RNA sequence: GGGAACGACUCGAGUAGAGUCGAAAACUUCCACUUACGAGGCCGCGGUCUACCGCUGUCACUGGUAGUCGCGAAGAGUUCGUCUCUGUCAGCCUUGGGAGCCGCGGACGGAGUAUGAGGUCCAGUAAUGAGAGCAGGGAAGAGUAAAGCGAGCCGCGACGCAAAAUAACUUCGGUUAUUUUGCGUCAAAAGAAACAACAACAACAAC
Reactivity to DMS in 0.01 (KOAc 150mM, MgCl2 10mM, bicine 150mM(pH8.5), 24C), signal-to-noise 1, nucleotides 027 to 156: c090u010u010c010c020a200c140u000u000a060c020g010a130g020g050c030c000g030c000g010g000u000c020u000a040c010c010g030c030u000g020u000c120a140c130u010g010g020u010a020g060u000c010g040c040g010a040a050g010a100g000u010u010c110g020u000c020u010c000u020g010u000c040a130g020c010c010u010u000g030g040g000a080g050c000c040g030c070g040g010a060c060g020g000a140g040u000a090u010g030a120g010g000u010c040c030a140g020u000a040a080u000g010a070g000a090g030c030a070g000g000g000a030a090g000a100g000u000a050a080a050g010c020g000a050g030c020c050g000c070
Reactivity to 2A3 in 0.01 (KOAc 150mM, MgCl2 10mM, bicine 150mM(pH8.5), 24C), signal-to-noise 3, nucleotides 027 to 156: c020u040u020c010c010a060c050u120u160a030c050g020a030g000g000c000c000g010c030g000g040u040c050u000a030c000c000g140c210u170g210u170c130a060c130u100g010g000u030a010g000u010c000g040c000g030a040a040g050a000g070u110u100c150g060u020c050u010c000u010g130u100c060a000g000c010c000u030u040g020g030g010a020g020c010c010g020c050g030g040a050c000g010g000a040g030u110a060u100g030a030g000g010u020c030c010a020g010u070a020a100u180g020a050g000a000g080c040a050g000g010g030a040a010g030a040g040u060a020a080a030g030c030g020a010g040c060c040g040c080